[RMDB]
RNA sequence: GGGAACGACUCGAGUAGAGUCGAAAACUGACUGCUCCGUUGCCAACUGGAUUUGGUAAACAUCCUUAAAACUUUCCAACGUCUGCUGAAGAAGGCUCCGACCAAUCCCCUGACGCUGGUAGAGUGGGCAUGCUCAGCGUUUCGACGCUGAGCAUGCAAAAGAAACAACAACAACAAC
Reactivity to 2A3 in 0.01 (KOAc 150mM, MgCl2 10mM, bicine 150mM(pH8.5), 24C), signal-to-noise 1, nucleotides 027 to 126: c000u050g050a020c020u000g000c010u050c040c000g060u050u000g060c000c000a010a010c100u130g170g000a230u000u000u180g040g150u070a180a050a000c020a040u090c020c000u050u090a120a040a040a120c090u080u060u000c080c050a050a030c050g020u000c000u040g020c070u070g040a020a020g000a050a000g130g000c020u000c070c110g110a240c000c000a000a100u030c040c070c000c010u010g080a000c020g020c010u010g000g000u120a070g000a000g080u000g020g100

The record gives the reactivity of an RNA of 177 nucleotides to 2A3. 2A3 adducts were read by reverse transcription with SuperScript II with manganese. Source: RMDB library OK1LIB, as collected in RNAgym. The reactions ran in a buffer of 150 mM KOAc, 10 mM MgCl2 and 150 mM bicine (pH 8.5), at 24 C. The 2A3 profile rests on 427 reads.